The record gives the reactivity of an RNA of 177 nucleotides to 2A3 and DMS. For DMS the reverse transcriptase was MarathonRT. For 2A3, 13,343 sequencing reads were counted. Values cover nucleotides 27 to 126. The RNA was probed in 150 mM KOAc, 10 mM MgCl2 and 150 mM bicine (pH 8.5) at 24 C.
RNA sequence: GGGAACGACUCGAGUAGAGUCGAAAAGCUCAAUCAGUUCAGGCAAUGAUUAAUGCUGAAGUCAUUAUUGCUAAACAGAGUGACCUUAGGCACGGUCAAGUAACCCCGCAACGCUGGGUUAUCGAACACUACGCUAUGAUUUCGAUCAUAGCGUAGUAAAAGAAACAACAACAACAAC
Reactivity to 2A3 in 0.01 (KOAc 150mM, MgCl2 10mM, bicine 150mM(pH8.5), 24C), signal-to-noise 3, nucleotides 027 to 126: g020c000u010c020a030a110u110c040a070g040u050u020c020a050g070g090c050a070a140u080g030a060u080u140a160a060u100g010c030u070g090a080a020g020u030c010a000u000u120a120u130u080g030c080u170a060a040a050c020a020g050a020g050u030g000a010c000c000u070u120a050g020g000c020a000c070g010g000u010c010a020a000g010u010a000a010c010c010c000c020g000c050a220a180c170g000c030u020g000g000g020u000u010a060u100c030g020a020a010c040
Reactivity to DMS in 0.01 (KOAc 150mM, MgCl2 10mM, bicine 150mM(pH8.5), 24C), signal-to-noise 8, nucleotides 027 to 126: g000c040u000c040a100a110u020c120a130g020u000u000c050a120g010g010c100a070a090u000g000a040u000u000a110a120u000g010c020u010g000a130a090g010u000c030a020u000u000a090u010u000g010c060u020a120a120a170c060a060g010a040g010u000g000a020c010c010u000u000a210g000g010c030a040c210g000g000u000c030a050a100g010u000a020a030c020c010c010c090g000c030a100a090c230g010c040u000g000g000g010u000u000a020u000c090g000a050a070c140